[RMDB]
RNA sequence: GGGAACGACUCGAGUAGAGUCGAAAAGUUCGCGCGUUCGCGCGCGAACAAAUAAAAUCAGCGGUUUUAAUUUCGAGGCGUUAACCGCUGAACGCCUCGAAAAAAGACUCUAGUUCGCUAGAGUCAAUCCGUUAUAAUGGUUCGCCAUUAUAACGGAAAAAGAAACAACAACAACAAC
Reactivity to DMS in 0.01 (KOAc 150mM, MgCl2 10mM, bicine 150mM(pH8.5), 24C), signal-to-noise 1, nucleotides 027 to 126: g030u000u010c010g080c000g060c000g030u000u010c240g030c040g040c000g010c000g010a010a000c010a010a090a060u000a040a020a110a050u000c010a040g030c040g000g030u000u030u010u010a080a110u000u000u000c010g020a020g020g010c000g000u000u010a030a080c050c060g000c040u000g000a010a000c000g010c000c000u000c010g010a010a010a030a060a080a110g010a000c000u000c010u000a000g000u030u030c150g020c010u000a010g000a040g010u000c010a060a050